[RMDB]
RNA sequence: GGGAACGACUCGAGUAGAGUCGAAAACAUGAUUGCUCGGCAACUAUAAUGACGGGUAGGUCGGGUACGAACCGUCGUAUGGUUCGUGAGCUGUGUGGGCUAAAGGGAAUAUAGCUCGGCGAACUGACUGGUACUGAACAUUCGUGUUCAGUGCCAGAAAAGAAACAACAACAACAAC
Reactivity to 2A3 in 0.01 (KOAc 150mM, MgCl2 10mM, bicine 150mM(pH8.5), 24C), signal-to-noise 9, nucleotides 027 to 126: c040a040u150g020a110u090u160g010c000u000c010g080g010c040a040a040c050u050a020u050a170a180u110g020a010c020g010g000g060u060a040g020g100u070c070g040g000g110u120a050c020g020a080a040c010c000g040u040c020g050u040a050u100g020g000u010u010c040g030u050g020a000g000c010u000g010u010g000u030g020g050g000c040u110a100a050a090g080g050g050a090a010u070a010u010a040g000c000u000c010g030g020c040g020a050a050c020u020g080a020
Reactivity to DMS in 0.01 (KOAc 150mM, MgCl2 10mM, bicine 150mM(pH8.5), 24C), signal-to-noise 7, nucleotides 027 to 126: c060a080u030g000a090u020u010g000c010u000c000g000g010c100a050a050c090u020a070u020a080a060u010g010a020c010g000g000g000u020a090g010g010u010c030g000g000g020u010a040c070g000a050a160c000c000g000u000c070g010u010a050u010g010g000u000u010c030g000u020g000a030g000c000u000g010u010g010u010g000g000g000c060u000a050a110a140g010g020g020a150a080u030a070u010a040g010c020u000c020g000g030c060g000a050a100c020u000g000a210